[RMDB]
RNA sequence: GGGAACGACUCGAGUAGAGUCGAAAAGGAAUUUGGAUCGCAAAUAAAGACAACAAUGAUGCAUGCAGUGAUUUGGAAGUUUCUGCUAUAGAUGCUUAUCCAUCAACAAGAACUAGAGAUUGGGACGCUCAAGCAUUGAGUUCGCUCAAUGCUUGAGAAAAGAAACAACAACAACAAC
Reactivity to DMS in 0.01 (KOAc 150mM, MgCl2 10mM, bicine 150mM(pH8.5), 24C), signal-to-noise 3, nucleotides 027 to 126: g020g000a120a030u020u030u010g000g030a080u010c150g060c020a030a030a100u030a030a150a060g010a140c200a040a110c110a070a110u060g000a050u000g010c050a050u000g010c020a060g030u000g020a100u020u020u000g000g000a040a090g000u000u000u000c010u000g000c050u000a090u000a030g000a030u000g010c010u000u030a100u020c100c020a000u000c030a030a080c120a040a060g000a130a090c060u000a050g000a090g000a100u020u050g020g000g000a260c170g010
Reactivity to 2A3 in 0.01 (KOAc 150mM, MgCl2 10mM, bicine 150mM(pH8.5), 24C), signal-to-noise 4, nucleotides 027 to 126: g080g000a040a070u040u050u080g010g050a030u060c000g000c070a080a020a000u150a050a120a050g120a080c070a060a000c020a140a200u220g010a060u140g050c060a020u050g000c010a020g020u030g040a090u040u200u210g070g090a070a000g000u000u000u120c030u020g030c000u030a040u060a120g040a020u060g000c020u060u050a050u120c010c010a020u040c010a000a060c050a060a050g050a090a000c030u060a040g040a000g030a210u020u120g020g020g020a020c020g000